[RMDB]
RNA sequence: GGGAACGACUCGAGUAGAGUCGAAAACUUGCAGAACGAGGUGAAGGAGGUGGUUCUGCUCAGCAGUCAACAGUGGCCACAUCUCCACCUGCAGCGACUUGAUGGCUUCCGUGUCCUUUUCGUGGGAACUCCCGGUAGAAUUCGUUCUACCGGGAGUAAAAGAAACAACAACAACAAC
Reactivity to 2A3 in 0.01 (KOAc 150mM, MgCl2 10mM, bicine 150mM(pH8.5), 24C), signal-to-noise 4, nucleotides 027 to 126: c010u020u110g010c050a030g030a140a050c060g020a060g060g010u070g040a130a080g020g030a030g020g020u030g030g000u060u040c010u040g010c010u040c020a070g020c010a030g100u130c070a030a050c020a100g040u100g110g030c000c000a000c000a060u040c010u010c010c000a030c010c000u020g010c020a010g020c010g070a060c040u050u080g040a060u120g070g030c000u040u020c020c010g050u050g070u080c030c000u040u050u020u100c100g090u150g000g030g050a010
Reactivity to DMS in 0.01 (KOAc 150mM, MgCl2 10mM, bicine 150mM(pH8.5), 24C), signal-to-noise 3, nucleotides 027 to 126: c080u010u010g010c050a090g000a090a220c110g010a060g000g000u000g010a090a110g010g020a070g000g030u010g010g010u010u000c020u000g000c050u000c080a140g010c050a060g000u000c050a050a100c050a050g010u030g000g000c020c010a060c020a030u030c010u010c030c060a090c120c020u000g030c060a100g000c050g010a080c080u000u000g010a090u010g000g000c030u000u000c010c010g020u010g000u010c000c010u000u020u000u000c060g000u000g010g000g020a110